This 177-nucleotide RNA was probed chemically with 2A3 and DMS. For DMS the reverse transcriptase was MarathonRT.
[RMDB]
RNA sequence: GGGAACGACUCGAGUAGAGUCGAAAAUUGUGGUCAAGACCUUGGCGUAGUAUCCAAGGUUGUCAAGGUUCCUAUUGACUUAACAAUGAUUCAGUUUAUGUUAUGGUGUAAGGAUGGACAGGGGAAACAGCUAUCCUAGUUUCGACUAGGAUAGCUGAAAAGAAACAACAACAACAAC
Reactivity to 2A3 in 0.01 (KOAc 150mM, MgCl2 10mM, bicine 150mM(pH8.5), 24C), signal-to-noise 2, nucleotides 027 to 126: u000u010g010u020g030g000u030c020a010a010g000a000c000c000u000u010g000g000c040g060u080a060g060u080a120u080c020c000a070a000g060g000u020u030g010u020c010a040a000g060g000u050u060c020c010u010a040u010u060g020a000c000u060u110a060a000c010a040a090u080g040a070u090u100c020a030g110u050u090u080a190u120g080u030u040a070u120g030g010u050g020u060a070a050g050g000a040u060g020g030a030c050a060g020g000g000g020a000a060a020
Reactivity to DMS in 0.01 (KOAc 150mM, MgCl2 10mM, bicine 150mM(pH8.5), 24C), signal-to-noise 5, nucleotides 027 to 126: u010u000g030u000g000g020u000c060a040a090g010a030c000c000u010u000g010g020c210g010u010a170g000u000a150u000c040c040a020a030g000g020u000u000g010u000c080a050a070g010g010u000u000c060c070u000a130u000u000g010a020c000u000u000a080a040c050a030a060u000g010a100u000u000c100a100g000u010u010u010a060u020g010u000u000a060u010g000g000u000g020u000a040a060g010g010a060u000g010g010a060c060a060g010g000g010g000a120a070a150